[RMDB]
RNA sequence: GGGAACGACUCGAGUAGAGUCGAAAAAAGUCCAUAUGCCCACCUUCGCUGUGUCGGGUGGAUGCUUAUACAUGCUAUGGAUGCCUACAUUUGAAAUAAUGUAGAUGCCUAAUACUCUCUCUCAGGGAGAGAGUUUAGAUGCCUCCAAAGGCGAUGCCGGGUAUAGUGAUUUCGAUCACUAUACCCGAAAAGAAACAACAACAACAAC
Reactivity to DMS in 0.01 (KOAc 150mM, MgCl2 10mM, bicine 150mM(pH8.5), 24C), signal-to-noise 1, nucleotides 027 to 156: a040a100g000u000c000c020a080u000a110u000g020c030c010c010a020c010c010u010u000c170g060c050u010g010u000g040u010c070g040g010g100u000g040g000a060u010g040c040u040u000a150u000a080c060a070u020g000c060u010a300u000g050g010a010u000g020c040c000u000a010c010a020u010u010u010g000a190a100a100u000a010a000u000g020u000a010g010a210u000g000c080c010u030a010a040u000a050c010u000c000u010c000u000c030u000c100a300g030g030g000a040g020a020g000a030g010u000u000u010a020g000a110u020g010c030c040u000c010c060a050a090a130g010g010c020g000a090u000g020c070
Reactivity to 2A3 in 0.01 (KOAc 150mM, MgCl2 10mM, bicine 150mM(pH8.5), 24C), signal-to-noise 2, nucleotides 027 to 156: a000a000g040u030c000c020a070u040a020u140g020c040c000c000a000c010c000u120u190c120g070c180u220g030u140g120u300c030g020g050g000u010g010g000a020u120g010c010u100u060a120u060a140c130a030u190g000c020u000a010u070g000g010a020u040g010c000c000u010a010c000a020u020u050u180g090a060a050a060u140a000a040u100g010u000a010g020a050u090g000c020c000u010a070a040u150a120c000u010c000u000c000u020c010u020c170a160g000g300g000a000g010a000g000a000g000u000u000u000a000g000a000u080g010c020c030u000c000c070a000a100a060g070g000c010g080a040u040g070c030
An RNA of 207 nucleotides, treated with DMS and 2A3 and read out base by base. For 2A3 the reverse transcriptase was SuperScript II with manganese. Conditions: 150 mM KOAc, 10 mM MgCl2 and 150 mM bicine (pH 8.5), 24 C. For 2A3, 921 sequencing reads were counted.